Conditions: 150 mM KOAc, 10 mM MgCl2 and 150 mM bicine (pH 8.5), 24 C. Structure probing data (DMS and 2A3) for a 207-nucleotide construct. For DMS, 3,224 sequencing reads were counted. For 2A3 the reverse transcriptase was SuperScript II with manganese.
[RMDB]
RNA sequence: GGGAACGACUCGAGUAGAGUCGAAAAAGUUCGCGCUCCCGUGAAACGCGAAAAUCGGACGGUGGCUGCAAGUCGCAUCGCAAAACCGCGGCAAGUGGAGUUAGCGAGAGGAGGCUGGGUUUUGGCUAGAACACACGGUACUUCGGUACCGUGUGAACAUUCAGACUACCUUCGGGUAGUCUGAAUGAAAAGAAACAACAACAACAAC
Reactivity to DMS in 0.01 (KOAc 150mM, MgCl2 10mM, bicine 150mM(pH8.5), 24C), signal-to-noise 2, nucleotides 027 to 156: a010g030u000u000c000g020c020g020c030u000c010c020c050g030u000g000a100a040a050c010g000c000g020a060a020a060a080u030c080g000g000a220c040g020g050u010g000g070c000u000g040c070a080a180g000u000c070g030c040a160u020c050g030c040a100a060a100a160c050c060g030c000g020g020c030a040a110g000u030g010g020a080g000u010u020a110g020c050g000a080g000a070g020g000a060g010g000c040u000g000g010g000u000u000u000u010g010g000c010u010a080g000a060a210c010a010c010a000c000g010g020u000a000c000u000u000c220g050g000u000a010c000c010g000u010g010u000g010a000a090
Reactivity to 2A3 in 0.01 (KOAc 150mM, MgCl2 10mM, bicine 150mM(pH8.5), 24C), signal-to-noise 2, nucleotides 027 to 156: a000g060u050u020c000g000c010g000c010u000c000c030c000g030u050g040a150a130a030c020g020c020g040a040a030a010a100u190c120g030g020a050c040g060g000u080g010g030c010u050g030c120a080a030g040u050c010g000c060a050u040c010g030c080a010a050a060a080c110c000g010c000g030g030c070a110a040g030u160g090g010a040g020u090u160a040g010c020g010a010g010a070g020g040a040g030g000c080u060g020g020g050u000u040u090u080g040g000c010u040a020g050a130a000c000a000c000a000c000g000g020u000a000c000u020u050c160g040g000u000a010c010c000g000u000g000u000g000a000a010